Structure probing data (2A3 and DMS) for a 177-nucleotide construct. Values are in units of 0.01, from 0 to 300, in steps of 10. Values cover nucleotides 27 to 126.
RNA sequence: GGGAACGACUCGAGUAGAGUCGAAAAGCACGUCGAGAUCCUGCCAAAGAGGAUGGAGGCGACGAACGAGCUGAGCUGCUACCGCUACGCCGCAGUCAUCCACGCUCGACACUCCGGUACACCUCCAACCUGCUUUGCCAUUCGUGGCAAAGCAGGUAAAAGAAACAACAACAACAAC
Reactivity to 2A3 in 0.01 (KOAc 150mM, MgCl2 10mM, bicine 150mM(pH8.5), 24C), signal-to-noise 1, nucleotides 027 to 126: g080c040a060c070g050u000c000g040a000g010a130u010c010c000u070g080c030c020a070a090a000g150a050g070g000a000u030g030g020a000g030g000c060g010a000c000g040a050a010c040g000a000g000c000u050g030a020g010c050u030g030c020u120a190c010c060g050c090u180a080c110g070c080c010g000c010a000g030u070c020a090u000c020c030a040c130g030c010u040c010g010a010c040a000c070u010c000c020g060g010u120a040c010a020c040c000u000c000c000a010
Reactivity to DMS in 0.01 (KOAc 150mM, MgCl2 10mM, bicine 150mM(pH8.5), 24C), signal-to-noise 2, nucleotides 027 to 126: g010c150a130c040g000u050c030g000a290g010a070u010c080c020u000g040c150c000a090a100a120g010a030g010g000a070u000g000g010a130g020g040c030g000a040c020g000a070a110c050g010a050g000c000u010g020a120g040c020u010g000c020u000a090c190c070g000c110u000a100c060g020c040c090g050c010a010g000u000c060a070u000c070c040a080c190g000c010u000c020g000a110c120a040c090u010c050c050g020g000u020a090c100a240c010c000u000c030c000a050